[RMDB]
RNA sequence: GGGAACGACUCGAGUAGAGUCGAAAAGAGACAGACAGAGUAAGGUUCAUUGUCGGUUCUCGUGAACCCUGUCAAAGACAUUUGGAUCCUAAUUGUAUCCAGAGAUUGCAGCCAAUAAAGAGAAUGCUCUCUUGCUAAAUUUCGAUUUAGCAAGAGAAAAAGAAACAACAACAACAAC
Reactivity to DMS in 0.01 (KOAc 150mM, MgCl2 10mM, bicine 150mM(pH8.5), 24C), signal-to-noise 6, nucleotides 027 to 126: g000a130g000a070c060a140g000a060c040a030g010a170g000u010a140a130g000g010u010u000c000a070u000u010g010u000c100g010g010u000u000c010u000c040g010u000g010a040a060c010c000c020u000g010u000c020a060a070a150g000a110c130a080u000u000u000g010g000a030u000c030c060u000a090a120u010u010g010u010a020u000c020c020a020g010a040g010a100u000u000g000c050a070g010c070c060a060a090u010a040a050a090g000a060g010a040a060u000g010c180
Reactivity to 2A3 in 0.01 (KOAc 150mM, MgCl2 10mM, bicine 150mM(pH8.5), 24C), signal-to-noise 3, nucleotides 027 to 126: g020a000g020a030c030a070g000a010c020a010g040a000g180u130a130a090g100g030u030u040c000a020u010u120g190u200c080g070g000u060u010c020u010c000g000u010g000a040a030c000c020c010u000g050u030c010a090a030a050g100a080c070a090u000u000u050g000g000a010u030c020c020u160a300a250u260u120g020u060a000u000c000c000a010g010a010g020a060u080u170g000c030a020g000c010c020a140a050u150a110a210a010g050a000g010a050a000u060g020c020